[RMDB]
RNA sequence: GGGAACGACUCGAGUAGAGUCGAAAAGGAAGAGGAGCAACUUCCGAACAUGCAGGCUGUAGCUUCACCCGGGCCUUGAACUGCCUGCAUCUCACAGACCACUGCAUUGCAUUAGGGCCUCCUGAGCUGGCCUGUGGCCGUGCCUGAUGGGGCAUUACCUCCGAAAAUAUUUCGAUAUUUUCGGAGGAAAAGAAACAACAACAACAAC
Reactivity to 2A3 in 0.01 (KOAc 150mM, MgCl2 10mM, bicine 150mM(pH8.5), 24C), signal-to-noise 2, nucleotides 027 to 156: g000g000a010a000g010a010g070g060a050g030c030a030a050c010u020u020c010c000g020a040a050c050a080u030g010c000a000g010g020c000u060g040u220a020g010c020u090u080c060a150c010c070c060g000g000g040c020c020u070u100g090a100a030c020u040g010c000c000u000g020c000a010u040c040u030c010a080c000a050g070a060c010c020a060c090u040g020c020a100u150u080g030c040a050u080u260a120g010g030g070c020c000u080c000c040u100g030a050g000c010u010g020g000c000c030u180g020u100g010g000c020c010g120u030g000c030c010u160g020a230u160g010g030g010g000c010a000u060u190a060
Reactivity to DMS in 0.01 (KOAc 150mM, MgCl2 10mM, bicine 150mM(pH8.5), 24C), signal-to-noise 1, nucleotides 027 to 156: g000g030a060a120g010a200g040g020a180g030c070a040a080c040u020u000c030c030g020a060a090c190a140u010g010c050a040g010g050c000u000g040u000a050g030c050u000u000c050a150c070c030c070g000g000g040c000c100u020u010g010a070a100c020u000g000c000c050u000g010c040a030u000c040u010c040a110c060a060g000a040c000c030a060c000u000g010c040a130u000u010g000c050a210u010u000a080g010g000g000c050c000u000c010c040u000g020a080g030c030u000g020g020c000c020u000g020u000g040g030c040c000g000u000g020c030c000u010g000a080u000g020g020g040g000c070a050u000u000a130